This 177-nucleotide RNA was probed chemically with 2A3 and DMS. The 2A3 profile rests on 2,556 reads. It was measured as part of the RMDB library OK1LIB. For DMS, 1,786 sequencing reads were counted. For DMS the reverse transcriptase was MarathonRT.
[RMDB]
RNA sequence: GGGAACGACUCGAGUAGAGUCGAAAACUAGGCACAGUGGGUGGUCGAGCGUCAUGCACUGAGAACAGGUCACGACCGGGAAGUCGGUGCUCGACGAUGAAGUGGCAAGGUCACACCUACUGGUGACGCGGGAAUCAAGCUUCGGCUUGGUUCCCGCAAAAGAAACAACAACAACAAC
Reactivity to 2A3 in 0.01 (KOAc 150mM, MgCl2 10mM, bicine 150mM(pH8.5), 24C), signal-to-noise 3, nucleotides 027 to 126: c030u010a020g100g000c050a010c000a080g000u000g010g030g000u010g010g020u000c020g020a030g010c020g010u030c020a080u110g020c110a000c000u000g020a020g080a170a050c090a090g000g040u060c030a000c110g050a020c010c010g000g090g000a050a000g040u030c010g000g000u000g000c020u020c010g000a000c000g110a170u150g100a100a060g140u100g040g040c120a120a040g150g010u040c010a000c000a000c030c000u070a030c000u000g080g000u000g020a020c060
Reactivity to DMS in 0.01 (KOAc 150mM, MgCl2 10mM, bicine 150mM(pH8.5), 24C), signal-to-noise 1, nucleotides 027 to 126: c020u000a130g020g000c000a080c020a050g020u020g000g000g000u000g020g020u020c030g000a110g000c000g000u000c000a160u000g060c140a000c000u010g000a110g000a070a250c050a120g000g010u000c100a140c280g000a140c020c030g000g020g000a070a090g000u020c010g050g000u000g000c030u010c020g000a010c060g000a170u000g030a100a150g010u000g000g010c010a200a170g000g000u020c000a110c000a020c020c030u010a000c020u000g000g020u000g000a090c110